Structure probing data (2A3) for a 207-nucleotide construct. For 2A3, 1,130 sequencing reads were counted. Values cover nucleotides 27 to 156. Conditions: 150 mM KOAc, 10 mM MgCl2 and 150 mM bicine (pH 8.5), 24 C.

[RMDB]
RNA sequence: GGGAACGACUCGAGUAGAGUCGAAAAUAUUACGAAUUCAGUCGCAAAUUGUAGAAUUAGCUACUCUACGAUUUAGUGAGCGUUAGUAACGUUGUAAUAUAAUAUAGUCUUUGGAAGGAUUAUAUUGGAGCCGCGGACAAGUUCGCUUGUCCGCGAAGGAAUAGCUCUUGUUCGCAAGAGCUAUUCCAAAAGAAACAACAACAACAAC
Reactivity to 2A3 in 0.01 (KOAc 150mM, MgCl2 10mM, bicine 150mM(pH8.5), 24C), signal-to-noise 2, nucleotides 027 to 156: u080a020u050u060a020c010g040a060a140u180u150c090a050g040u070c030g010c020a010a000a010u000u000g000u000a000g030a020a010u050u050a030g060c020u060a010c020u000c000u010a000c000g030a010u020u010u060a060g020u020g020a060g070c050g060u040u170a040g020u090a100a020c060g000u000u020g000u030a070a100u030a090u020a120a010u010a000u010a010g010u000c050u000u130u140g140g070a160a060g010g000a000u020u020a010u010a000u020u020g040g050a060g110c050c030g000c020g000g010a000c000a010a020g000u080u100c160g030c070u000u000g000u000c020c020g000c000g020a000a000